The data come from the RNA Mapping Database (RMDB), library VIROID. Chemical mapping of a 207-nucleotide RNA with 2A3. For 2A3 the reverse transcriptase was SuperScript II with manganese. The reactions ran in a buffer of 150 mM KOAc, 10 mM MgCl2 and 150 mM bicine (pH 8.5), at 24 C.

[RMDB]
RNA sequence: GGGAACGACUCGAGUAGAGUCGAAAAGGUAGUUUCCAACUCCGGCUUGUGUGAAGAACGAGCCGUUCCACGCAGGACGAGAACAAGAAGAAGCCGAAGCAACUUCAGUGCGCCGCGCACGAACUGGCGCUCGAUCUCCGCCUCGCUCGAGUAGGUUAUUACGCUAAUCCUUCGGGAUUAGCGUAAUAAAAGAAACAACAACAACAAC
Reactivity to 2A3 in 0.01 (KOAc 150mM, MgCl2 10mM, bicine 150mM(pH8.5), 24C), signal-to-noise 1, nucleotides 027 to 156: g050g000u020a000g010u020u090u010c040c050a000a040c030u030c060c020g000g030c020u030u010g000u000g020u000g170a140a210g000a060a000c000g020a030g110c060c020g010u000u010c010c000a030c020g000c070a070g000g020a040c000g000a020g040a170a040c060a050a050g090a040a000g020a040a000g000c100c080g020a060a000g000c010a030a030c000u040u060c020a020g030u000g040c020g000c010c010g040c010g040c040a060c110g040a110a050c080u140g060g000c020g020c010u050c010g020a050u000c010u030c030c070g000c000c000u010c020g010c010u000c010g010a030g000u040a000g010g100u010u020